[RMDB]
RNA sequence: GGGAACGACUCGAGUAGAGUCGAAAAGACGCGCGGUACCGUGCAUGGGCUGAUCGGCCAGAACGGCGCGGGCAAGUCGACGCUCGUCAAGCUUCUGGCGGGCCUGCACGCGCCGGACGAAGGCGAAAUGCCCCUCCUCAUUCGUGAGGAGGGGCAUAAAAGAAACAACAACAACAAC
Reactivity to DMS in 0.01 (KOAc 150mM, MgCl2 10mM, bicine 150mM(pH8.5), 24C), signal-to-noise 2, nucleotides 027 to 126: g020a070c100g000c090g040c030g010g010u000a060c120c040g020u010g040c060a110u010g010g000g020c020u000g000a140u000c060g030g000c010c020a040g010a090a260c000g000g010c020g010c000g020g000g010c030a030a130g010u030c210g010a090c180g030c010u010c040g010u000c010a110a160g040c200u000u000c120u000g050g010c010g000g000g000c030c070u000g000c000a020c010g000c030g000c010c000g000g010a030c070g030a100a070g010g000c000g010a060a180
Reactivity to 2A3 in 0.01 (KOAc 150mM, MgCl2 10mM, bicine 150mM(pH8.5), 24C), signal-to-noise 1, nucleotides 027 to 126: g080a010c030g040c000g000c000g050g060u190a230c060c030g070u070g100c040a090u110g000g040g010c030u010g020a120u090c040g100g010c030c000a000g010a010a010c020g000g000c000g000c000g000g010g000c020a040a020g090u160c060g090a080c080g010c030u000c020g000u020c000a040a100g100c070u140u130c030u100g010g000c000g000g070g020c000c030u030g000c010a000c000g000c000g000c020c000g000g000a000c030g100a190a000g050g010c020g010a040a030
An RNA of 177 nucleotides, treated with DMS and 2A3 and read out base by base.
For 2A3, 1,380 sequencing reads were counted.
For 2A3 the reverse transcriptase was SuperScript II with manganese.
For DMS the reverse transcriptase was MarathonRT.
Values cover nucleotides 27 to 126.
The RNA was probed in 150 mM KOAc, 10 mM MgCl2 and 150 mM bicine (pH 8.5) at 24 C.
2A3 is a SHAPE reagent: it acylates the 2'-hydroxyl of flexible nucleotides of all four kinds.
The DMS profile rests on 1,534 reads.